Notes: The record gives the reactivity of an RNA of 177 nucleotides to 2A3 and DMS. The RNA was probed in 150 mM KOAc, 10 mM MgCl2 and 150 mM bicine (pH 8.5) at 24 C. The data come from the RNA Mapping Database (RMDB), library OK2TRN. For 2A3, 2,981 sequencing reads were counted.
[RMDB]
RNA sequence: GGGAACGACUCGAGUAGAGUCGAAAAUUCGCUCAAAAGAUACUCUCUGGGAUAUUGCUGUUGCCAACAGGCCCAAUAAGGGUGUGACAUCACAGCAAAUGAUGGUGUUAAUACAGCGCAAAAAUCCAGUGGAGUGUUAAUUCGUUAACACUCCACUAAAAGAAACAACAACAACAAC
Reactivity to 2A3 in 0.01 (KOAc 150mM, MgCl2 10mM, bicine 150mM(pH8.5), 24C), signal-to-noise 3, nucleotides 027 to 126: u010u010c010g010c020u040c040a060a040a000a040g050a030u070a070c010u020c000u000c020u080g110g010g000a060u080a110u190u090g020c020u000g010u110u080g030c020c010a050a060c040a120g090g050c000c000c060a050a140u300a160a110g010g000g000u090g050u020g090a010c000a030u100c020a010c010a010g100c040a040a080a050u100g000a030u040g000g050u010g000u050u010a030a030u030a080c030a010g000c000g010c040a000a050a080a040a110u010c030c010
Reactivity to DMS in 0.01 (KOAc 150mM, MgCl2 10mM, bicine 150mM(pH8.5), 24C), signal-to-noise 4, nucleotides 027 to 126: u000u010c010g000c040u010c070a090a130a150a210g020a050u000a040c030u000c140u000c030u000g000g010g010a060u000a120u000u000g010c020u010g010u000u010g010c140c100a080a080c100a100g020g000c020c010c030a150a100u010a170a110g030g030g010u010g010u000g010a040c040a030u000c100a010c030a050g010c100a050a060a130u000g010a060u000g000g030u000g010u000u000a060a060u010a080c220a050g020c000g010c190a030a050a030a070a110u000c030c070